[RMDB]
RNA sequence: GGGAACGACUCGAGUAGAGUCGAAAACCACCAAGUUUGGAAAGCACUCCGGGCCAAAUGGUUGAGUAGCACUCAGAGGGAGGAAUCCACACGGAGGUAAGCAGACAAAUCACCUCCAGAGGACCCCGAUCAGUUAAACGUUCGCGUUUAACUGAUCAAAAGAAACAACAACAACAAC
Reactivity to DMS in 0.01 (KOAc 150mM, MgCl2 10mM, bicine 150mM(pH8.5), 24C), signal-to-noise 1, nucleotides 027 to 126: c040c000a170c120c070a180a010g000u030u000u000g010g010a070a150a070g030c040a040c100u000c010c080g000g000g000c010c000a080a040a070u030g030g000u000u010g000a090g010u010a120g000c030a300c050u000c070a070g000a100g000g000g010a070g000g000a180a050u000c000c000a030c180a210c050g010g010a050g030g030u010a120a120g010c110a170g010a090c070a000a180a090u000c040a070c000c010u000c000c000a170g000a300g000g000a100c030c000c000c080
Reactivity to 2A3 in 0.01 (KOAc 150mM, MgCl2 10mM, bicine 150mM(pH8.5), 24C), signal-to-noise 1, nucleotides 027 to 126: c000c020a000c000c050a000a070g060u060u120u110g090g050a130a170a010g010c030a020c050u000c030c040g000g010g000c040c000a080a150a080u110g060g030u060u070g040a020g010u150a010g040c040a030c040u010c030a010g090a160g110g000g030a030g000g040a030a050u000c000c000a020c010a020c140g020g010a010g000g000u030a080a010g060c130a030g070a270c090a060a180a040u080c020a010c020c000u000c030c000a010g020a020g030g000a000c000c000c000c010